[RMDB]
RNA sequence: GGGAACGACUCGAGUAGAGUCGAAAAUUUUAAGAAACGUCGGGCGCUAAACGCCAGCAAGACCGUCCCCGCUAUCAAGAUGACCGAGAGCGCAUAGACCACAUUACUGUCGGGAUCUUUACGGAUGGUUCUAUACUAAUUUCGAUUAGUAUAGAACAAAAGAAACAACAACAACAAC
Reactivity to DMS in 0.01 (KOAc 150mM, MgCl2 10mM, bicine 150mM(pH8.5), 24C), signal-to-noise 9, nucleotides 027 to 126: u000u010u010u010a070a150g000a110a110a090c110g010u000c050g010g000g010c030g020c100u020a060a090a200c080g000c010c010a090g000c080a080a100g010a060c050c040g010u000c020c010c020c050g010c060u000a070u000c110a050a060g010a060u010g000a100c040c030g000a060g000a060g010c060g020c110a060u010a080g010a120c080c080a070c080a070u000u010a080c070u000g010u000c030g010g000g000a070u000c010u000u000u000a080c120g010g010a090u010g010
Reactivity to 2A3 in 0.01 (KOAc 150mM, MgCl2 10mM, bicine 150mM(pH8.5), 24C), signal-to-noise 4, nucleotides 027 to 126: u020u020u010u060a080a030g030a020a110a000c040g030u020c040g040g010g010c020g010c090u100a120a060a030c010g000c030c020a000g040c020a040a030g010a020c010c010g030u010c010c000c000c000g010c020u080a090u090c030a050a040g020a140u070g060a120c000c020g040a030g000a000g070c040g000c040a020u090a060g090a040c010c020a040c040a080u080u170a050c030u050g060u080c020g030g030g000a010u000c010u030u060u060a040c050g080g040a050u060g080
Chemical mapping of a 177-nucleotide RNA with DMS and 2A3. DMS (dimethyl sulfate) methylates the pairing face of unpaired adenines and cytosines. For DMS, 12,303 sequencing reads were counted. The reactions ran in a buffer of 150 mM KOAc, 10 mM MgCl2 and 150 mM bicine (pH 8.5), at 24 C. As a SHAPE reagent, 2A3 marks flexible, mostly unpaired nucleotides at the ribose 2'-OH.